Source information:
An RNA of 177 nucleotides, treated with 2A3 and DMS and read out base by base. The DMS profile rests on 2,980 reads. Conditions: 150 mM KOAc, 10 mM MgCl2 and 150 mM bicine (pH 8.5), 24 C. DMS adducts were read by reverse transcription with MarathonRT.

RNA sequence: GGGAACGACUCGAGUAGAGUCGAAAAAUCGGUUCAAUACAAUUACGAAAAUGCUUCAAAAUAAUCUCGGAUUUGUUGUGAACCCAUGUAAUAGGUUAGAUAGGCUUACAAGUGGAUUAAUGUUUUAUCCAUUAUAGGGGUUCGCCCCUAUAAUGGAAAAAGAAACAACAACAACAAC
Reactivity to 2A3 in 0.01 (KOAc 150mM, MgCl2 10mM, bicine 150mM(pH8.5), 24C), signal-to-noise 1, nucleotides 027 to 126: a000u060c020g000g010u010u010c010a000a010u020a080c010a000a060u100u100a070c010g010a070a000a040a070u060g020c020u140u300c140a110a080a090a110u120a090a200u070c010u010c060g060g000a020u010u020u050g010u000u090g070u000g040a010a000c010c000c000a000u140g010u040a060a030u010a100g050g000u040u020a050g060a110u040a050g040g050c010u050u010a000c000a070a130g090u110g090g010a020u010u160a040a040u100g040u020u130u000u050a080
Reactivity to DMS in 0.01 (KOAc 150mM, MgCl2 10mM, bicine 150mM(pH8.5), 24C), signal-to-noise 4, nucleotides 027 to 126: a070u000c180g000g020u000u000c040a130a100u010a030c020a030a030u010u010a090c020g000a020a070a110a080u000g000c170u000u010c210a080a080a120a090u010a100a090u000c090u000c010g010g000a040u000u000u000g010u010u020g010u040g000a020a000c010c000c100a030u000g010u010a050a200u000a030g010g010u000u000a020g000a080u000a060g020g000c020u000u000a020c050a010a110g020u010g000g000a040u010u010a060a050u010g000u010u010u000u010a110